Annotation:
This 177-nucleotide RNA was probed chemically with 2A3 and DMS. Conditions: 150 mM KOAc, 10 mM MgCl2 and 150 mM bicine (pH 8.5), 24 C.

RNA sequence: GGGAACGACUCGAGUAGAGUCGAAAAGAUAUGGAGCUGGCAGGAGGUAGGUUUCCCUCGGAAACGAGCAACCUACUACCCACCCUGCAGCUCCUAAGUCAAAGGUGCCGAGUUCGCUCGGCACCAACAUGACUUAAAACUUCGGUUUUAAGUCAUGAAAAGAAACAACAACAACAAC
Reactivity to 2A3 in 0.01 (KOAc 150mM, MgCl2 10mM, bicine 150mM(pH8.5), 24C), signal-to-noise 4, nucleotides 027 to 126: g020a000u060a050u140g000g010a010g040c030u080g280g130c130a000g010g020a040g040g030u020a000g000g010u000u030u040c080c020c010u000c010g010g000a060a080a020c000g000a010g010c000a000a010c000c000u010a020c010u030a040c040c040c000a080c020c000c000u000g000c000a000g010c000u020c000c000u010a030a000g040u000c050a040a020a190g000g020u000g010c000c020g000a010g010u080u150c250g040c150u000c000g000g000c000a000c000c000a000a000
Reactivity to DMS in 0.01 (KOAc 150mM, MgCl2 10mM, bicine 150mM(pH8.5), 24C), signal-to-noise 6, nucleotides 027 to 126: g010a040u000a300u010g010g010a010g020c010u000g030g030c010a010g010g010a110g010g010u000a000g000g000u000u000u010c250c270c000u000c000g020g000a080a090a150c010g000a010g040c280a020a010c000c010u000a020c010u010a040c070c060c120a300c120c000c000u000g010c010a030g000c000u000c000c000u010a010a060g000u000c030a070a100a110g000g020u000g010c010c000g000a010g000u000u010c260g010c000u000c000g000g000c000a000c000c000a010a070
The 2A3 profile rests on 13,978 reads.